Chemical mapping of a 177-nucleotide RNA with DMS and 2A3. The 2A3 profile rests on 49,767 reads. Source: RMDB library OK1LIB, as collected in RNAgym. Values cover nucleotides 27 to 126. For DMS, 84,770 sequencing reads were counted. For DMS the reverse transcriptase was MarathonRT.
[RMDB]
RNA sequence: GGGAACGACUCGAGUAGAGUCGAAAAGCAUGGGAAUACGAUACGUGGGGCAUCCCGCGGUCGCGAUCGCAUCCACCGGGUAACGCCGAAGAGGCCACCACGUAGCAGUAUAGAAGUACACAGUGUGACAUGGAACGUCGUUCGCGAUGUUUCAUGUAAAAGAAACAACAACAACAAC
Reactivity to DMS in 0.01 (KOAc 150mM, MgCl2 10mM, bicine 150mM(pH8.5), 24C), signal-to-noise 9, nucleotides 027 to 126: g010c070a060u010g010g000g020a160a040u000a020c030g010a130u000a010c010g040u000g010g010g000g020c070a100u020c020c050c070g020c090g000g000u020c070g020c180g010a070u020c100g020c060a260u010c050c060a070c160c020g000g000g010u010a080a110c180g000c010c010g000a220a090g000a110g000g010c010c020a150c000c000a000c010g010u000a010g000c100a140g010u000a020u000a050g010a110a070g010u010a070c100a090c100a110g000u020g000u010g010
Reactivity to 2A3 in 0.01 (KOAc 150mM, MgCl2 10mM, bicine 150mM(pH8.5), 24C), signal-to-noise 9, nucleotides 027 to 126: g050c050a070u140g040g030g110a120a030u050a040c020g040a040u020a030c010g010u010g000g000g020g010c030a090u160c020c020c020g040c030g020g010u060c050g000c050g070a080u140c080g000c050a040u030c020c010a030c050c010g000g000g020u060a110a040c050g010c020c010g020a090a030g040a030g030g030c000c010a120c010c000a010c010g010u010a010g020c090a010g020u020a020u030a080g100a110a020g060u110a040c090a010c050a090g080u070g040u070g180